Structure probing data (DMS and 2A3) for a 177-nucleotide construct.
RNA sequence: GGGAACGACUCGAGUAGAGUCGAAAAGAUAUGGAUCGAUGUGUCGGGUGAUGACCGGUCUCGGAAACGAGACCGCAAGCCUCACAGCGAUCCUAAGUCAAAACGGUUGUUGUUCGCAACAACCGAAGAAAUGAAUGUAGUUCGCUACAUUCAUUUCAAAAGAAACAACAACAACAAC
Reactivity to DMS in 0.01 (KOAc 150mM, MgCl2 10mM, bicine 150mM(pH8.5), 24C), signal-to-noise 9, nucleotides 027 to 126: g010a040u010a300u000g000g010a010u000c000g000a040u000g020u000g010u020c300g010g000g020u000g020a170u010g000a150c300c010g000g000u000c000u000c010g000g000a110a100a200c010g000a010g010a010c010c000g010c040a040a230g010c000c010u010c020a010c010a020g000c010g010a010u000c000c010u000a010a080g000u000c030a090a100a140a230c030g000g010u000u000g010u000u000g010u010u010c260g010c020a010a010c000a010a010c000c000g000a020a040
Reactivity to 2A3 in 0.01 (KOAc 150mM, MgCl2 10mM, bicine 150mM(pH8.5), 24C), signal-to-noise 8, nucleotides 027 to 126: g030a020u070a030u160g000g010a000u010c020g020a020u020g050u020g140u240c300g060g000g030u060g060a300u160g050a100c120c030g000g010u000c000u000c010g020g010a070a080a060c010g000a000g000a000c000c000g000c000a010a040g010c000c000u120c010a000c000a010g010c010g000a000u000c000c000u010a040a010g030u000c030a020a030a090a130c010g000g000u000u000g010u000u010g030u070u110c270g020c130a000a000c000a000a000c000c000g000a020a030

2A3 adducts were read by reverse transcription with SuperScript II with manganese.